[RMDB]
RNA sequence: GGGAACGACUCGAGUAGAGUCGAAAAUCUCUCUUGUUCGCAAGAGAGAAAAGAACGCCAAAGUGACGCAAACUUCGGCGUCAGGAAGGCGAAACGAGGUAAAAAGGGGGAUCUUCGGAUCCCCCAACGUCCAUGAAGGGUUCGCCCUUCAUGGACGAAAAGAAACAACAACAACAAC
Reactivity to DMS in 0.01 (KOAc 150mM, MgCl2 10mM, bicine 150mM(pH8.5), 24C), signal-to-noise 1, nucleotides 027 to 126: u000c010u000c000u000c000u000u000g020u010u000c280g030c000a020a030g020a010g000a020g000a000a010a120a070g010a120a060c020g030c000c020a010a060a290g030u000g000a000c040g000c070a160a100a160c180u000u000c190g000g000c000g000u020c010a060g000g020a090a170g000g010c030g000a030a050a050c080g010a140g000g000u010a010a050a130a080a120g000g000g000g000g000a020u000c000u000u010c270g030g000a000u000c000c000c000c000c000a000a000